[RMDB]
RNA sequence: GGGAACGACUCGAGUAGAGUCGAAAAGGGGCUGAUUAGGAUUCGACGGAAUUCAAGAAGCCCAAGGUGCAUGUCGAGGUGCGGUUUGCCUCGUUAAACAGCCGCAACCUAAAGUAAUCGCAAACGACGAUAACUACUCUCUAGCGGCUUAGGCCAGCCCGACAAAAAACUUCGGUUUUUUGUCGGGAAAAGAAACAACAACAACAAC
Reactivity to 2A3 in 0.01 (KOAc 150mM, MgCl2 10mM, bicine 150mM(pH8.5), 24C), signal-to-noise 1, nucleotides 027 to 156: g000g000g020g030c010u000g010a070u090u120a050g020g000a010u060u010c040g030a060c110g180g040a000a000u000u000c000a010a030g000a020a000g000c020c000c000a000a010g050g000u040g040c080a080u050g060u120c000g030a010g000g000u000g020c000g000g000u170u150u100g100c000c000u010c020g000u000u030a020a120a020c010a010g000c000c010g050c010a040a170c030c010u120a110a110a140g020u030a050a120u050c000g000c010a090a210a090c150g170a080c010g020a060u070a120a110c060u060a010c020u080c000u000c020u060a040g030c020g020g000c020u080u070a050g050g000c010c000a030g010
The record gives the reactivity of an RNA of 207 nucleotides to 2A3. Conditions: 150 mM KOAc, 10 mM MgCl2 and 150 mM bicine (pH 8.5), 24 C. For 2A3 the reverse transcriptase was SuperScript II with manganese. It was measured as part of the RMDB library ARCHII. Values cover nucleotides 27 to 156.